The record gives the reactivity of an RNA of 177 nucleotides to 2A3. Reactivities are rounded to 0.1 and cut off at 0 and 3. The reactions ran in a buffer of 150 mM KOAc, 10 mM MgCl2 and 150 mM bicine (pH 8.5), at 24 C.
[RMDB]
RNA sequence: GGGAACGACUCGAGUAGAGUCGAAAAGAUUGAUCCCUUUGGCAUUUUCAAUAAACCAUCCAGCUGCUUGGUCCUGGAUGUAGCAGAUAAGGGUUUUCUCGGAGAAGCCAGGUGGUUUGGUCAACAGCCCCAAAAUACGUUUCGACGUAUUUUGGGGAAAAGAAACAACAACAACAAC
Reactivity to 2A3 in 0.01 (KOAc 150mM, MgCl2 10mM, bicine 150mM(pH8.5), 24C), signal-to-noise 4, nucleotides 027 to 126: g120a080u050u070g040a030u020c010c000c000u030u050u030g060g000c080a140u060u010u060u090c110a140a090u120a110a050a030c040c010a030u050c010c010a000g010c070u050g040c020u100u200g080g030u160c020c040u030g030g000a050u050g000u020a000g000c040a050g030a100u110a110a120g100g050g020u070u090u050u020c060u080c040g040g010a080g000a050a000g030c020c030a010g010g020u090g040g020u020u090u170g000g030u050c020a050a000c040a100g030